[RMDB]
RNA sequence: GGGAACGACUCGAGUAGAGUCGAAAAGAUAUGGACAUUCUCCCCACCUUGGUAGGACGAAGAACUCGGAAACGAGGGAGUCCAAACAAGAGGAAUGUCCUAAGUCAAACUGAGCUUCGGCUCAGAAUCACAACCAAUGGUUCGCCAUUGGUUGUGAAAAAGAAACAACAACAACAAC
Reactivity to 2A3 in 0.01 (KOAc 150mM, MgCl2 10mM, bicine 150mM(pH8.5), 24C), signal-to-noise 1, nucleotides 027 to 126: g070a100u210a170u210g010g000a000c000a000u010u030c030u200c050c010c010c000a030c000c000u020u050g050g030u080a020g020g000a010c020g060a300a070g060a050a040c020u020c010g020g100a100a020a010c000g010a000g000g000g030a030g010u000c020c000a060a270a000c000a000a020g000a000g000g000a030a000u000g030u040c000c000u010a100a020g100u020c040a070a070a160c000u000g000a000g000c000u080u130c300g170g000c000u050c000a010g000a010a070
Reactivity to DMS in 0.01 (KOAc 150mM, MgCl2 10mM, bicine 150mM(pH8.5), 24C), signal-to-noise 2, nucleotides 027 to 126: g000a100u000a110u030g010g000a010c020a000u000u000c000u000c110c010c000c070a300c130c020u000u010g000g030u000a240g020g000a000c060g000a110a280g020a120a240c020u000c020g000g000a120a070a170c000g000a020g030g000g000a080g000u000c000c020a060a090a300c000a010a000g070a200g040g000a000a010u000g020u000c000c000u000a050a090g000u020c110a090a060a160c000u000g010a010g000c000u000u000c150g060g000c000u000c030a000g000a100a090